[RMDB]
RNA sequence: GGGAACGACUCGAGUAGAGUCGAAAACUUGGUGGUGCCGAAGUAGAAGGCCAUUACCGACUUCAGCUCGGCGAACCAAUAGCCGAUGAUGGUGCCGAUGGCGACCGAGGAUGUCGGGUCCAUCAGACACUUGGACCUGUUUCGACAGGUCCAAGUGAAAAGAAACAACAACAACAAC
Reactivity to DMS in 0.01 (KOAc 150mM, MgCl2 10mM, bicine 150mM(pH8.5), 24C), signal-to-noise 2, nucleotides 027 to 126: c170u000u000g020g000u000g020g030u020g020c010c000g010a050a090g050u000a110g030a060a090g020g020c040c080a100u000u010a090c240c120g000a090c000u000u000c010a270g020c050u000c000g020g020c020g030a260a060c030c040a020a050u000a170g020c010c020g000a090u000g000a040u020g000g010u000g000c000c010g010a070u000g000g000c040g000a080c110c090g010a080g000g000a090u000g010u000c000g000g030g050u000c010c000a010u010c020a050g010a210
Reactivity to 2A3 in 0.01 (KOAc 150mM, MgCl2 10mM, bicine 150mM(pH8.5), 24C), signal-to-noise 2, nucleotides 027 to 126: c030u040u040g020g010u040g030g180u230g030c020c030g020a160a030g030u080a020g030a070a020g040g050c010c010a040u050u200a090c020c070g020a030c030u010u020c020a040g080c010u000c010g000g000c000g010a020a030c010c000a000a050u050a040g010c040c050g050a080u150g020a030u070g050g100u110g280c040c050g060a040u050g030g010c020g040a050c040c060g030a060g130g030a140u090g000u020c000g000g000g000u020c010c000a020u010c000a010g060a120